The record gives the reactivity of an RNA of 207 nucleotides to 2A3 and DMS. DMS adducts were read by reverse transcription with MarathonRT. The DMS profile rests on 2,139 reads.

RNA sequence: GGGAACGACUCGAGUAGAGUCGAAAACCUGUUAUCUGACCAAUAACAGAAUGCACCACAGCGUAAAAUCAUCUGAUUGGGUGAGUUGGUCGCACCGCCAUUUGACGAACGAACGCCAAGCCUAAACACUACGAGUAUGUGUUCGCACAUACUCGAAGACAUUUGUAUGCUUCGGCAUACAAAUGUCAAAAGAAACAACAACAACAAC
Reactivity to 2A3 in 0.01 (KOAc 150mM, MgCl2 10mM, bicine 150mM(pH8.5), 24C), signal-to-noise 6, nucleotides 027 to 156: c000c000u000g000u000u000a020u000c010u000g000a000c000c000a010a000u010a010a010c000a020g060a090a110u180g030c030a030c060c000a030c040a040g040c030g040u070a030a080a070a070u060c030a030u000c050u110g090a170u080u180g120g000g000u020g010a030g000u020u030g010g000u010c010g020c040a000c000c010g030c030c010a060u080u060u090g040a050c030g020a120a010c020g010a050a010c020g030c010c010a050a040g000c020c030u170a100a050a010c070a040c120u240a040c050g000a000g010u000a000u000g020u000g030u030u080c160g020c060a000c000a000u000a000c000u000c000g000a010a010
Reactivity to DMS in 0.01 (KOAc 150mM, MgCl2 10mM, bicine 150mM(pH8.5), 24C), signal-to-noise 1, nucleotides 027 to 156: c090c000u030g000u010u010a000u010c020u030g020a090c050c060a300a090u000a010a020c020a030g000a180a070u010g020c040a090c020c040a070c080a070g030c060g010u000a090a070a130a000u000c020a050u010c020u000g000a260u010u020g020g000g020u000g000a300g000u010u000g010g040u000c050g020c040a030c010c000g000c080c050a120u020u000u000g010a100c010g000a090a110c100g010a080a050c020g040c040c020a000a180g020c010c010u000a080a090a110c110a070c030u000a110c010g020a010g040u010a020u020g050u000g030u010u000c300g000c030a020c000a020u000a000c010u010c000g000a040a030
Background: Source: RMDB library M2RFPK, as collected in RNAgym. The reactions ran in a buffer of 150 mM KOAc, 10 mM MgCl2 and 150 mM bicine (pH 8.5), at 24 C.